[RMDB]
RNA sequence: GGGAACGACUCGAGUAGAGUCGAAAAUGAAACACUUCGGUGUUUCACUGCCUCCUAAGUCACUUUCGAGGUGCACCUAUAAUCUCUAUCGGAAACGAUAGAGGUAGGGCACCGAUGAGAAAGUGAUAUGGACUUCACGGAUUCUUCGGAAUCCGAAGUAAGCGAUAUGUUUCGACAUAUCGCUUACAAAAGAAACAACAACAACAAC
Reactivity to 2A3 in 0.01 (KOAc 150mM, MgCl2 10mM, bicine 150mM(pH8.5), 24C), signal-to-noise 5, nucleotides 027 to 156: u030g000a000a000a000c010a010c040u060u110c300g120g000u000g000u000u000u000c000a000c020u050g010c010c000u000c000c010u090a120a040g010u000c000a010c000u010u000u010c040g030a070g000g000u010g000c010a300c060c000u060a070u100a300a300u140c000u000c000u000a000u000c000g100g010a130a070a070c010g000a000u000a000g000a000g000g000u000a000g000g000g020c000a000c000c000g010a020u030g020a020g000a000a000a010g000u010g000a000u000a010u020g010g010a050c050u130u070c260a030c080g000g000a020u000u000c000u040u100c200g080g000a000a010u000c000c000g010a050a020
Reactivity to DMS in 0.01 (KOAc 150mM, MgCl2 10mM, bicine 150mM(pH8.5), 24C), signal-to-noise 1, nucleotides 027 to 156: u000g000a010a000a040c010a020c000u010u010c250g060g010u010g000u000u000u010c000a030c040u020g080c060c040u000c010c010u000a090a300g000u000c000a040c000u000u010u020c000g000a170g030g000u000g010c010a170c010c000u000a110u020a210a110u010c000u010c020u000a020u000c000g070g020a240a130a300c000g010a020u000a000g030a010g050g020u000a000g010g010g010c050a010c030c040g000a050u030g000a220g000a000a040a010g030u000g010a000u000a090u000g020g040a060c100u000u010c060a230c050g040g000a030u000u010c010u000u000c280g040g000a010a010u000c000c000g030a000a060